The data come from the RNA Mapping Database (RMDB), library RFMREP. An RNA of 177 nucleotides, treated with DMS and 2A3 and read out base by base. For DMS the reverse transcriptase was MarathonRT. For DMS, 867 sequencing reads were counted.
RNA sequence: GGGAACGACUCGAGUAGAGUCGAAAAGCUCUGUAAUGGGAUGGGAUCCGAAGCCCCAUUGAGGGAUAAUACAGGCUCUCCCAUCCAACUCCUAUUCCAACACGUCCUCGUCGUACAGAGUGGUAACGGAGUUACCUCAGUUCGCUGAGGUAACUCCAAAAGAAACAACAACAACAAC
Reactivity to DMS in 0.01 (KOAc 150mM, MgCl2 10mM, bicine 150mM(pH8.5), 24C), signal-to-noise 2, nucleotides 027 to 126: g020c000u000c030u000g020u010a090a160u000g010g020g000a000u000g020g000g000a000u000c000c000g020a220a110g040c030c010c010c000a260u020u010g020a160g070g020g000a060u000a120a070u010a130c140a240g010g010c010u000c020u000c010c000c020a020u030c030c000a060a070c110u020c090c050u000a080u000u000c050c080a080a100c120a100c070g000u000c050c030u000c080g010u000c090g000u000a100c000a040g000a000g030u030g000g020u010a140a150c260
Reactivity to 2A3 in 0.01 (KOAc 150mM, MgCl2 10mM, bicine 150mM(pH8.5), 24C), signal-to-noise 2, nucleotides 027 to 126: g010c000u030c000u000g040u030a130a060u150g100g010g000a000u000g030g000g020a020u210c020c020g020a060a030g020c000c000c000c030a080u090u130g100a300g000g030g030a050u060a150a050u140a230c080a020g030g020c010u020c000u030c000c000c000a030u000c000c000a000a010c000u000c010c010u060a170u130u000c020c010a070a030c030a070c110g020u000c020c020u090c020g080u050c020g000u020a010c000a000g020a010g030u050g070g020u060a110a000c040